[RMDB]
RNA sequence: GGGAACGACUCGAGUAGAGUCGAAAAGUAGGAGGAUUACUUGUGCUUGAGAGGUGGAGGUUGCAGUGAACCAUGAUGAUGCCACUGAACUCCAGCCUGGGUGACAAAGUGAGGCCCUGUCUCAAAAAAACAACAACAACAAAACAAAACAAACAAAGACUGGUCGCGAUUUCGAUCGCGACCAGUCAAAAGAAACAACAACAACAAC
Reactivity to 2A3 in 0.01 (KOAc 150mM, MgCl2 10mM, bicine 150mM(pH8.5), 24C), signal-to-noise 4, nucleotides 027 to 143: g080u080a040g010g040a010g030g010a010u040u050a060c020u050u070g010u050g050c030u090u080g080a080g010a040g070g030u040g020g000a010g030g030u110u110g020c010a010g010u020g050a050a040c030c020a030u060g020a040u100g020a020u080g120c070c000a020c000u020g020a050a010c010u000c010c000a020g020c020c020u030g030g000g000u040g010a020c040a030a090a020g030u060g030a020g010g030c020c000c020u020g050u010c030u050c060a000a000a000a000a000a000a000c000a000a000c000a000a000c000a000a000c000a000a000a050a300